[RMDB]
RNA sequence: GGGAACGACUCGAGUAGAGUCGAAAAGCGCAGAAGAAGGAGUCGCUGGAGUGGGGUGUGGUCCGUGACUGAUUCGCCGCUUGACGACGCCAUCCAAGAGGCCAAAUCCGCUGCGCAAAAGGCGGGAAUUGCUAUAUCGGUUCGCCGAUAUAGCAAUAAAAGAAACAACAACAACAAC
Reactivity to 2A3 in 0.01 (KOAc 150mM, MgCl2 10mM, bicine 150mM(pH8.5), 24C), signal-to-noise 2, nucleotides 027 to 126: g010c000g000c020a030g030a160a020g030a040a050g100g050a090g030u050c040g030c070u050g040g030a130g080u180g030g160g000g020u080g020u050g030g000u000c020c060g040u040g050a040c020u040g080a210u090u140c070g020c040c000g010c050u090u100g010a010c040g000a000c020g000c010c010a020u010c010c000a030a020g040a030g090g000c000c010a070a060a050u000c030c020g020c020u000g000c040g000c020a040a060a020a080g030g000c050g030g000g000a050
Reactivity to DMS in 0.01 (KOAc 150mM, MgCl2 10mM, bicine 150mM(pH8.5), 24C), signal-to-noise 3, nucleotides 027 to 126: g020c010g020c020a020g010a120a070g010a090a070g010g000a110g030u000c040g010c040u000g020g000a050g020u010g010g030g010g020u000g040u000g020g010u000c010c300g000u000g000a040c040u000g010a130u000u010c130g000c030c000g010c050u000u020g000a080c060g010a050c040g010c040c020a130u010c030c050a040a080g020a110g010g000c010c070a040a040a160u010c010c150g010c000u000g000c050g010c030a040a030a090a110g000g020c040g000g010g020a130

The data come from the RNA Mapping Database (RMDB), library OK2TRN. This 177-nucleotide RNA was probed chemically with 2A3 and DMS. For 2A3 the reverse transcriptase was SuperScript II with manganese. High DMS reactivity at an A or C suggests that its Watson-Crick edge is free. For DMS, 3,366 sequencing reads were counted.